[RMDB]
RNA sequence: GGGAACGACUCGAGUAGAGUCGAAAACAGGACAACCCGAACCCCAACACCGGGCAGUUCGGCUGGCCGCGGACGAAGGUCUCCGGCGUCAUCGGCGUCCACACCGCCGAAAACAACACGGACUUCGAGGGCGCGGACGCCGGGGCGGAGGACGUCGAGCCUAAUUAAAUUUCGAUUUAAUUAGGCUAAAAGAAACAACAACAACAAC
Reactivity to 2A3 in 0.01 (KOAc 150mM, MgCl2 10mM, bicine 150mM(pH8.5), 24C), signal-to-noise 2, nucleotides 027 to 156: c080a060g050g010a020c000a030a050c040c000c000g000a010a020c040c000c000c050a170a060c050a170c110c090g160g000g000c080a080g010u040u060c010g050g000c050u030g060g020c000c000g070c050g100g000a000c020g050a070a030g070g080u070c030u020c010c000g020g020c000g000u000c010a080u110c020g180g000c000g000u000c000c000a030c050a010c040c020g040c000c010g110a010a140a030a020c140a070a020c050a040c160g050g070a160c070u090u130c270g040a140g010g000g000c030g030c030g010g000a020c000g000c000c000g000g000g000g000c000g020g010a020g030g040a010c010g010u060c010g030
Reactivity to DMS in 0.01 (KOAc 150mM, MgCl2 10mM, bicine 150mM(pH8.5), 24C), signal-to-noise 1, nucleotides 027 to 156: c050a060g000g000a090c010a100a050c000c000c000g010a110a040c030c040c000c020a140a150c180a150c100c160g020g010g020c030a080g030u000u010c010g040g070c030u000g000g000c000c000g000c060g020g000a060c010g010a090a080g020g040u000c040u000c000c000g000g040c020g000u010c000a080u000c000g010g020c020g000u000c000c060a080c000a030c220c010g000c000c020g000a010a050a090a070c190a160a100c180a140c040g040g000a120c180u010u010c090g020a160g000g020g040c000g020c000g010g010a010c030g010c000c010g000g010g010g010c050g000g010a100g000g010a140c050g000u000c010g010
The record gives the reactivity of an RNA of 207 nucleotides to 2A3 and DMS. DMS (dimethyl sulfate) methylates the pairing face of unpaired adenines and cytosines. DMS adducts were read by reverse transcription with MarathonRT. 2A3 adducts were read by reverse transcription with SuperScript II with manganese. Reactivities are given for positions 27 through 156.